[RMDB]
RNA sequence: GGGAACGACUCGAGUAGAGUCGAAAAGCAAUCGCAGCCAUCGUUCCGCUACACCAUGCCCAAAACUUUGCUGCGGACUUACGGGCAGACGGCCUCAACGUCAUUGAGCUGCAAUCCGGCCACGGCGGAUACCCACGGUCUUCGGACCGUGGGUAUCAAAAGAAACAACAACAACAAC
Reactivity to DMS in 0.01 (KOAc 150mM, MgCl2 10mM, bicine 150mM(pH8.5), 24C), signal-to-noise 2, nucleotides 027 to 126: g000c050a090a040u020c060g000c010a020g030c000c070a110u010c020g000u010u020c000c040g050c030u000a070c160a100c110c100a170u020g030c000c000c010a060a130a070a070c160u010u000u000g030c050u000g000c040g000g000a090c110u000u010a150c230g000g030g030c020a070g010a040c090g000g000c020c040u000c090a040a130c110g000u000c060a150u000u000g020a060g000c070u010g030c000a130a070u010c030c020g010g010c040c020a090c130g020g000c100g000
Reactivity to 2A3 in 0.01 (KOAc 150mM, MgCl2 10mM, bicine 150mM(pH8.5), 24C), signal-to-noise 1, nucleotides 027 to 126: g100c050a000a130u150c050g040c030a000g030c020c010a060u140c060g010u040u060c000c030g040c030u030a040c050a030c090c030a060u090g020c000c000c000a060a140a000a070c060u040u070u080g020c040u010g000c000g020g000a010c000u080u150a030c040g000g000g000c020a010g090a030c030g080g020c010c100u090c050a090a050c040g130u030c030a070u040u140g030a050g040c010u000g010c000a000a050u050c010c000g040g000c000c000a030c030g000g030c000g070